[RMDB]
Structure probing data (2A3 and DMS) for a 177-nucleotide construct.
RNA sequence: GGGAACGACUCGAGUAGAGUCGAAAAGCUCUGGGCCGAAGUGGUCACGGUUACUUCUCCAACCUCAAUGGGCGGAAGCGGUGCAAGCCGUUCCGGGUUCGAUUCCCGGCAUGAAGUGGCCCGUCCGCAUAUUGGGUCCGUUCGCGGACCCAAUAUGAAAAGAAACAACAACAACAAC
Reactivity to 2A3 in 0.01 (KOAc 150mM, MgCl2 10mM, bicine 150mM(pH8.5), 24C), signal-to-noise 4, nucleotides 027 to 126: g020c030u030c070u120g000g020g000c010c010g060a120a040g050u080g060g050u040c010a000c030g000g010u070u030a060c020u050u030c040u020c020c030a070a070c010c010u120c060a120a170u200g030g000g000c010g020g030a050a000g020c010g030g000u060g060c100a110a040g000c010c000g000u030u000c000c000g010g000g000u010u050c050g000a020u040u070c000c010c020g010g010c010a030u130g030a070a000g030u160g080g020c000c000c010g030u050c020c010g010
Reactivity to DMS in 0.01 (KOAc 150mM, MgCl2 10mM, bicine 150mM(pH8.5), 24C), signal-to-noise 5, nucleotides 027 to 126: g010c090u000c060u010g000g010g000c020c000g010a080a160g000u000g010g000u000c080a080c100g010g010u000u020a040c010u040u000c010u010c040c060a050a300c040c020u020c230a180a150u040g030g020g040c130g000g010a080a040g010c050g000g000u000g000c250a080a100g000c010c010g020u000u000c000c000g000g010g010u000u010c150g010a300u010u010c010c020c000g010g000c300a050u000g000a040a050g000u000g020g000c040c000c020g000u010c030c040g000